[RMDB]
Overview:
An RNA of 177 nucleotides, treated with 2A3 and read out base by base. Values are in units of 0.01, from 0 to 300, in steps of 10.
RNA sequence: GGGAACGACUCGAGUAGAGUCGAAAAACGCUCAGUGUACGCACUGAGCGAACUCCUUCUGCAGCUCUGGUGGAAAAUGGAGAAGACUUUUCCUUUCCUCCAUCUCCCCCAGGGCCUGGUGGAGUAACCAGUCCUUCUGCUUCGGCAGAAGGACUGGAAAAGAAACAACAACAACAAC
Reactivity to 2A3 in 0.01 (KOAc 150mM, MgCl2 10mM, bicine 150mM(pH8.5), 24C), signal-to-noise 1, nucleotides 027 to 126: a010c000g010c000u000c010a020g000u000g000u030a060c090g090c020a000c000u000g020a000g000c000g000a000a000c020u020c000c000u100u170c010u100g000c140a050g000c000u000c000u020g000g000u070g000g000a080a000a000a090u000g000g040a000g060a090a060g020a120c110u260u120u160u120c090c000u080u120u050c000c010u020c000c000a000u030c020u020c040c010c000c000c000a000g030g010g000c030c000u010g000g010u010g030g000a020g000u000a000a000
Values cover nucleotides 27 to 126. For 2A3, 779 sequencing reads were counted. For 2A3 the reverse transcriptase was SuperScript II with manganese. It was measured as part of the RMDB library RFM100. Conditions: 150 mM KOAc, 10 mM MgCl2 and 150 mM bicine (pH 8.5), 24 C.